[RMDB]
RNA sequence: GGGAACGACUCGAGUAGAGUCGAAAAACAAGUUCUUAAGGCUUUGCAGAAGGCUGUUAAUAUAGCUAAAAACGCCUAUGAGAAGGAUAAGGCAGUGGCCCGUAAGUUAGAACGUAUGGCUGAUCAGGAGGUCUCUUCUUCGGAAGAGACAAAAGAAACAACAACAACAAC
Reactivity to 2A3 in 0.01 (KOAc 150mM, MgCl2 10mM, bicine 150mM(pH8.5), 24C), signal-to-noise 6, nucleotides 027 to 129: a000c090a080a000g090u040u010c010u040u100a010a030g040g000c010u040u090u120g010c040a040g040a150a050g060g000c010u040g020u050u040a100a020u160a050u040a090g040c030u070a060a000a010a020a010c080g020c010c010u060a120u200g070a080g020a030a040g040g020a070u050a120a030g030g000c010a000g010u020g030g000c020c000c000g010u030a040a050g020u030u090a030g030a060a020c030g020u080a060u130g030g000c020u030g010a050u020c030a030g050g020a010g100
Reactivity to DMS in 0.01 (KOAc 150mM, MgCl2 10mM, bicine 150mM(pH8.5), 24C), signal-to-noise 6, nucleotides 027 to 129: a080c150a100a090g020u020u010c020u010u010a040a040g000g000c000u010u040u020g000c100a090g000a120a080g000g000c020u020g030u000u070a070a050u040a010u020a030g000c060u000a020a080a070a070a040c120g010c000c000u000a030u060g000a040g010a080a040g030g030a100u000a080a080g000g000c070a050g040u020g000g030c030c030c050g030u050a040a110g020u010u010a090g000a060a040c090g040u040a070u010g010g010c060u000g030a020u030c040a060g000g000a100g030
Structure probing data (2A3 and DMS) for a 170-nucleotide construct. High 2A3 reactivity points to a flexible backbone, as in loops and unpaired stretches. Source: RMDB library 15KLIB, as collected in RNAgym.